Chemical mapping of a 207-nucleotide RNA with 2A3. 2A3 adducts were read by reverse transcription with SuperScript II with manganese. The reactions ran in a buffer of 150 mM KOAc, 10 mM MgCl2 and 150 mM bicine (pH 8.5), at 24 C.

RNA sequence: GGGAACGACUCGAGUAGAGUCGAAAAGACGUGGUUGCAAUUAUACAACUCUUUGUGGGUUGGCGCCGCGCCCAAGCUCAACUGCACUUCCUCGUAAGAGGAGCCGAGUUUUAGACGUGUCCCGGAUUAUAUCGAUCUUUGCGGGGAGUCCUGGGCGGAAAUGGUUUGAGUUCGCUCAAACCAUUUCAAAAGAAACAACAACAACAAC
Reactivity to 2A3 in 0.01 (KOAc 150mM, MgCl2 10mM, bicine 150mM(pH8.5), 24C), signal-to-noise 2, nucleotides 027 to 156: g060a010c010g020u040g050g070u160u300g060c020a070a030u280u070a070u150a210c010a010a030c080u100c080u140u200u280g180u300g040g000g010u000u010g030g000c020g000c010c010g000c000g010c000c010c000a060a010g010c010u000c010a010a090c020u140g000c100a030c030u210u070c010c010u020c000g060u060a130a010g010a010g130g030a020g000c050c040g020a040g000u020u190u140u210a050g000a020c030g070u080g060u130c030c000c030g020g000a040u140u050a090u040a090u230c060g020a030u000c040u130u120u180g030c040g000g020g030g000a000g000u000c020c050u010g010g000g030c040g010